[RMDB]
RNA sequence: GGGAACGACUCGAGUAGAGUCGAAAACCCGCUUUCGAGCGGGAGUCGACCUUUGUGUUGCUUUCUGUAUUGUCAGCGUUCGAGUACCCAUUGGGUACCCUGAACGCUUGGAUUUAUACGAAAGCAACACUCUGGUACAGCCAGCCUUCGGGCUGAAGGUUAGACUGCUAUUCGUAGCAGUCUAACCAAAAGAAACAACAACAACAAC
Reactivity to 2A3 in 0.01 (KOAc 150mM, MgCl2 10mM, bicine 150mM(pH8.5), 24C), signal-to-noise 2, nucleotides 027 to 156: c010c000c010g030c000u080u110u110c300g120a010g000c000g020g040g000a010g090u110c090g090a000c000c000u000u010u020g010u000g000u010u000g010c000u040u000u050c130u210g000u020a010u020u010g010u020c010a000g010c020g010u000u000c010g000a000g000u000a000c020c020c080a250u180u300g000g010g000u000a000c010c000c050u160g010a000a000c000g020c030u020u030g030g000a010u000u300u050a010u010a000c000g030a000a000a020g000c000a000a000c000a000c000u020c000u000g000g000u060a210c020a020g070c040c010a000g000c010c010u070u110c280g100g020g000c000u050g000a070a030
Description
The record gives the reactivity of an RNA of 207 nucleotides to 2A3. For 2A3 the reverse transcriptase was SuperScript II with manganese. The reactions ran in a buffer of 150 mM KOAc, 10 mM MgCl2 and 150 mM bicine (pH 8.5), at 24 C. For 2A3, 1,538 sequencing reads were counted.